[RMDB]
RNA sequence: GGGAACGACUCGAGUAGAGUCGAAAAUAUCAUCCGGCAAGACGCCGGCAUGGGCGUCCAGCAUAUCGCUAUAGCGCUUACGCUGGCUUUGAUACACUUUUGCCAGCGUCGGAUCGUCAAGCACGCAUCCUCCAGUAAUCUUCGGAUUACUGGAGGAAAAAGAAACAACAACAACAAC
Reactivity to 2A3 in 0.01 (KOAc 150mM, MgCl2 10mM, bicine 150mM(pH8.5), 24C), signal-to-noise 4, nucleotides 027 to 126: u270a040u040c020a020u010c000c000g010g000c040a020a120g190a070c110g030c000c010g020g010c050a100u080g010g010g010c010g030u060c020c000a020g030c020a070u100a070u160c090g000c030u100a070u140a180g040c050g000c000u000u000a020c000g000c010u010g020g000c070u010u090u130g080a110u160a110c110a100c110u020u060u110u110g000c000c010a000g010c000g020u000c030g020g000a070u090c040g040u030c050a030a070g050c010a030c040g030c020a060
Reactivity to DMS in 0.01 (KOAc 150mM, MgCl2 10mM, bicine 150mM(pH8.5), 24C), signal-to-noise 3, nucleotides 027 to 126: u050a120u030c050a070u000c000c000g000g030c060a100a140g010a110c140g000c030c010g020g000c130a010u000g000g000g030c080g000u020c080c120a150g000c090a090u020a100u050c060g020c020u020a070u010a200g000c040g000c060u000u000a020c110g000c000u000g000g000c030u000u010u020g050a150u030a100c160a050c170u010u000u000u000g010c010c000a000g020c000g030u000c010g040g010a070u020c030g030u000c060a170a160g000c040a070c180g000c120a160
Structure probing data (2A3 and DMS) for a 177-nucleotide construct. The RNA was probed in 150 mM KOAc, 10 mM MgCl2 and 150 mM bicine (pH 8.5) at 24 C. Reactivities are given for positions 27 through 126. It was measured as part of the RMDB library OK1LIB.